[RMDB]
RNA sequence: GGGAACGACUCGAGUAGAGUCGAAAAGAAUGGCAGCAGAGUGCGGCCGCGGUCCGCGUACUUUUUUGUACGCCCGUCGAGACCCCGACGGAGGGUCGGACCGAGCACUUCGGCCGCUGCCUAAGAACACCCACGUAAUGUUCGCAUUACGUGGGUGAAAAGAAACAACAACAACAAC
Reactivity to 2A3 in 0.01 (KOAc 150mM, MgCl2 10mM, bicine 150mM(pH8.5), 24C), signal-to-noise 1, nucleotides 027 to 126: g090a090a080u120g000g000c010a030g010c040a010g050a040g270u170g030c060g030g000c040c020g060c020g030g010u030c020c010g000c000g010u020a000c030u020u290u280u060u110u120g000u000a010c000g030c000c000c000g000u010c010g000a040g000a030c000c000c010c040g020a010c000g000g050a050g140g090g030u180c030g000g020a000c020c020g010a010g020c040a010c000u130u090c040g060g000c010c050g000c010u000g000c000c010u020a050a000g060a070a010
Reactivity to DMS in 0.01 (KOAc 150mM, MgCl2 10mM, bicine 150mM(pH8.5), 24C), signal-to-noise 2, nucleotides 027 to 126: g000a090a050u010g010g010c010a040g060c040a170g010a120g000u010g010c060g010g000c090c070g010c020g010g010u000c010c020g010c010g000u000a000c000u000u010u000u010u000u000g020u000a000c010g000c070c030c020g000u000c000g000a200g020a150c040c040c020c010g000a030c020g000g000a140g010g010g030u010c050g000g010a030c010c010g000a160g020c120a050c150u020u010c050g020g030c060c060g000c000u000g010c000c000u010a100a130g010a140a220
Structure probing data (2A3 and DMS) for a 177-nucleotide construct. The 2A3 profile rests on 1,926 reads.